[RMDB]
RNA sequence: GGGAACGACUCGAGUAGAGUCGAAAAGAGGACGACAAUGAGGGUGGUGAUGAGGACGACGACAAAGGAUCCGGUGGGCGUGGAAGUGAAAGACAAAGAGAACACCCCUUUAUAGUCACGGAGCCGGUGAGCUACAUGACUUCGGUCAUGUAGCUCAAAAAGAAACAACAACAACAAC
Reactivity to DMS in 0.01 (KOAc 150mM, MgCl2 10mM, bicine 150mM(pH8.5), 24C), signal-to-noise 1, nucleotides 027 to 126: g000a040g020g020a070c150g010a030c050a060a090u040g010a160g010g040g000u000g000g020u000g050a110u010g000a060g010g000a110c100g000a070c060g000a110c220a060a100a060g030g010a220u010c110c010g020g030u000g000g010g000c090g010u000g020g020a050a070g010u020g000a070a050a020g000a020c110a090a070a090g000a090g010a070a060c080a060c060c010c000c050u010u020u000a030u020a130g010u000c050a060c030g000g000a140g020c080c030g000g000